[RMDB]
The record gives the reactivity of an RNA of 177 nucleotides to DMS.
Values are in units of 0.01, from 0 to 300, in steps of 10.
For DMS the reverse transcriptase was MarathonRT.
For DMS, 845 sequencing reads were counted.
Source: RMDB library OK2TST, as collected in RNAgym.
RNA sequence: GGGAACGACUCGAGUAGAGUCGAAAAUUCUUUUUAAACCUGACGCGGCCACAGCUUCAUGAAUUUCAUUUGUUUUUUGUAAAAUGCGGUUGACUGUGGAUCUGUCGCAUUUGAACUUGGCACAAAAAUUUAUGCACCAGUUCGCUGGUGCAUAAAUAAAAGAAACAACAACAACAAC
Reactivity to DMS in 0.01 (KOAc 150mM, MgCl2 10mM, bicine 150mM(pH8.5), 24C), signal-to-noise 1, nucleotides 027 to 126: u000u010c000u000u050u000u000u000a050a180a140c060c040u010g000a060c090g020c110g040g010c000c020a020c070a040g020c060u010u000c020a040u010g000a040a090u010u000u000c070a070u000u000u010g010u000u010u030u000u000u020g020u000a010a040a010a000u000g010c030g000g000u000u000g000a060c020u050g030u020g010g020a130u000c020u010g030u020c030g000c020a020u000u030u000g010a040a070c050u010u010g000g000c100a040c130a040a070a040a070

Reactivities are given for positions 27 through 126.